[RMDB]
RNA sequence: GGGAACGACUCGAGUAGAGUCGAAAAGAGGUCAGCCGACUUGGCGGAGGAACGCAGCCAACAAAGGUAACUGCGACUGGCGAAGGCACGUAGCCAACAAGCAGUUAGACCUUGCCACUAGCCAAAAUUUGAAAACGGUGUUCGCACCGUUUUCAAAAAAAGAAACAACAACAACAAC
Reactivity to 2A3 in 0.01 (KOAc 150mM, MgCl2 10mM, bicine 150mM(pH8.5), 24C), signal-to-noise 3, nucleotides 027 to 126: g030a000g010g000u020c020a020g000c050c020g050a080c050u000u050g000g000c040g040g060a110g140g140a050a010c060g030c100a020g030c000c000a010a010c100a060a230a000g020g000u030a030a000c000u010g000c000g040a040c040u010g020g010c040g100a090a080g120g040c080a030c130g050u070a000g000c000c000a000a060c030a070a000g010c020a000g000u010u010a060g020a020c000c000u000u000g040c000c000a060c070u110a050g060c020c040a020a050a030a100
Reactivity to DMS in 0.01 (KOAc 150mM, MgCl2 10mM, bicine 150mM(pH8.5), 24C), signal-to-noise 2, nucleotides 027 to 126: g000a060g000g030u000c030a160g000c000c030g020a110c170u020u030g000g000c050g000g000a230g000g010a030a090c090g030c080a150g000c090c000a060a020c080a070a050a250g010g000u000a000a000c000u000g000c070g000a220c180u000g000g000c000g030a140a050g000g000c070a030c070g060u000a170g010c000c000a050a010c240a130a300g000c000a000g000u000u000a050g000a080c010c000u000u000g000c060c000a040c010u000a130g000c020c020a020a100a000a090